Structure probing data (2A3) for a 207-nucleotide construct.
Values are in units of 0.01, from 0 to 300, in steps of 10.
The reactions ran in a buffer of 150 mM KOAc, 10 mM MgCl2 and 150 mM bicine (pH 8.5), at 24 C.

RNA sequence: GGGAACGACUCGAGUAGAGUCGAAAAAGGAUAUGGUUACAACGAUUAGAGAUGUUACAAUGUAUGAUUCGCAGCCCAAUCCCUCAAUAUGGGAUCAGGUUCAGAGACUAAACGGAGAUCGAUCUAGGCAUUGAACUAGGUUUAAGAUAUAGUCCAUAGCUAUAAUGUGCUUCGGCACAUUAUAGCUAAAAGAAACAACAACAACAAC
Reactivity to 2A3 in 0.01 (KOAc 150mM, MgCl2 10mM, bicine 150mM(pH8.5), 24C), signal-to-noise 2, nucleotides 027 to 156: a000g100g000a050u150a010u130g000g020u060u070a080c040a010a010c050g030a030u050u200a060g010a010g010a050u030g030u060u000a050c080a060a000u110g010u150a040u110g080a060u060u060c100g000c030a020g020c010c000c000a000a060u010c010c030c000u120c080a030a080u150a030u300g000g000g000a010u000c030a030g030g000u010u010c020a050g010a000g010a010c030u080a060a160a000c040g120g000a000g000a050u130c030g000a000u040c000u000a020g020g000c110a170u050u240g000a050a000c000u000a030g020g000u000u000u140a040a030g020a010u040a020u030a140g010u160c010c020a030u020